[RMDB]
RNA sequence: GGGAACGACUCGAGUAGAGUCGAAAAUCACAUACUCCUUGUAGAGAGCCCUGAAAUGAUCGACAUCCAGAUGCUCGACUAGCAUCCAUGCCGUGGAGUACCCGUGGAGCUUUGACAAGACGAGGUCAUGCUCAUAAGCAUUCGUGCUUAUGAGCAUAAAAGAAACAACAACAACAAC
Reactivity to DMS in 0.01 (KOAc 150mM, MgCl2 10mM, bicine 150mM(pH8.5), 24C), signal-to-noise 4, nucleotides 027 to 126: u000c060a060c090a140u030a110c040u000c040c000u020u000g020u000a100g000a130g000a050g010c020c040c010u000g000a060a070a070u010g000a100u000c070g010a040c050a030u000c070c200a070g010a040u000g000c040u000c170g010a120c120u010a080g010c010a010u000c020c090a060u000g010c040c030g010u020g010g010a100g010u000a040c060c020c030g000u010g000g010a130g020c070u000u020u000g010a080c060a040a110g000a110c130g000a060g010g010u010c090
Reactivity to 2A3 in 0.01 (KOAc 150mM, MgCl2 10mM, bicine 150mM(pH8.5), 24C), signal-to-noise 2, nucleotides 027 to 126: u050c010a020c010a050u050a060c000u000c030c020u020u070g050u110a110g010a010g010a020g110c000c040c000u030g080a140a130a100u100g010a090u100c040g020a010c020a040u030c030c060a040g020a050u030g060c010u050c050g170a160c150u120a020g000c000a010u000c010c000a010u070g030c020c020g030u020g030g000a020g010u050a070c000c020c000g040u060g000g020a080g000c050u150u160u100g040a030c030a050a030g020a070c040g040a030g070g000u090c040

About this RNA
Chemical mapping of a 177-nucleotide RNA with DMS and 2A3. 2A3 is a SHAPE reagent: it acylates the 2'-hydroxyl of flexible nucleotides of all four kinds.